[RMDB]
RNA sequence: GGGAACGACUCGAGUAGAGUCGAAAAUUCUAUUUCGACGAAAUGUCGCAGAUCCUGAUGGAUCGCUGGUCGCGGGGCAGGGUAGCGCUCGUUGGCGACGCUGGUUAUUGCUGCUCGCCCUUGUCGGCUCCAGAUUAUAGUUCGCUAUAAUCUGGAGAAAAGAAACAACAACAACAAC
Reactivity to 2A3 in 0.01 (KOAc 150mM, MgCl2 10mM, bicine 150mM(pH8.5), 24C), signal-to-noise 5, nucleotides 027 to 126: u030u000c030u030a120u070u150u120c020g020a010c010g060a150a170a200u300g020u080c030g000c050a060g000a030u020c010c000u260g250a160u300g030g010a020u010c030g010c120u100g080g000u060c010g010c020g020g000g000g000c030a180g000g030g030u020a000g000c030g010c030u030c020g060u030u090g110g010c090g040a060c060g000c060u030g000g080u090u120a130u160u150g000c010u010g020c000u000c000g000c000c020c010u030u130g120u110c000g000g010
Reactivity to DMS in 0.01 (KOAc 150mM, MgCl2 10mM, bicine 150mM(pH8.5), 24C), signal-to-noise 7, nucleotides 027 to 126: u000u010c070u000a120u000u010u000c020g010a020c020g010a090a130a090u010g010u000c020g010c250a150g010a010u000c010c000u010g010a180u020g030g010a010u000c010g020c170u010g000g020u000c030g020c050g000g010g010g020c010a090g020g010g010u000a020g030c010g010c080u000c080g000u000u000g020g010c100g010a060c090g020c080u000g000g000u000u010a120u010u000g010c010u000g000c010u000c020g000c020c000c010u000u000g020u000c030g010g000
This 177-nucleotide RNA was probed chemically with 2A3 and DMS. The RNA was probed in 150 mM KOAc, 10 mM MgCl2 and 150 mM bicine (pH 8.5) at 24 C. For 2A3, 7,719 sequencing reads were counted. The data come from the RNA Mapping Database (RMDB), library OK2TRN.